RNA sequence: GGGAACGACUCGAGUAGAGUCGAAAAGUCAUUCGGAUUCGCCAUCAUACGUCCAACCGUGCAUUUGAUAUGCAUAUAUAUGCAUCACGAGCCACGGUUGGGCUGUAUGAUGGCGAUACCGAUUGGAGGUGUACCCUUUAUUCGUAAAGGGUACACCAAAAGAAACAACAACAACAAC
Reactivity to 2A3 in 0.01 (KOAc 150mM, MgCl2 10mM, bicine 150mM(pH8.5), 24C), signal-to-noise 4, nucleotides 027 to 126: g060u030c000a010u010u010c010g020g020a030u010u020c000g000c000c000a000u000c000a000u000a010c000g000u010c000c000a000a000c000c000g000u000g000c060a190u040u040u140g090a100u060a010u090g000c050a000u090a010u040a020u040a010u060g000c000a010u000c040a010c050g030a010g070c090c000a000c000g000g000u000u000g000g000g000c000u000g000u000a000u000g000a000u000g000g000c000g000a000u000a000c000c000g000a000u010u020g050g010a080
Reactivity to DMS in 0.01 (KOAc 150mM, MgCl2 10mM, bicine 150mM(pH8.5), 24C), signal-to-noise 4, nucleotides 027 to 126: g010u000c020a010u000u000c000g000g000a300u000u010c000g010c000c010a020u000c000a000u000a010c010g010u010c000c000a020a000c000c000g020u000g010c130a110u020u000u000g000a140u010a020u000g020c000a010u010a150u040a090u050a040u000g000c010a020u000c110a120c120g010a040g020c240c010a000c010g000g000u000u000g000g000g000c000u010g030u000a000u000g000a000u000g010g000c000g000a000u000a020c000c010g000a010u000u000g020g030a100
This 177-nucleotide RNA was probed chemically with 2A3 and DMS. Source: RMDB libraries RFM100 and RFMREP, as collected in RNAgym. As a SHAPE reagent, 2A3 marks flexible, mostly unpaired nucleotides at the ribose 2'-OH. For 2A3 the reverse transcriptase was SuperScript II with manganese. Conditions: 150 mM KOAc, 10 mM MgCl2 and 150 mM bicine (pH 8.5), 24 C.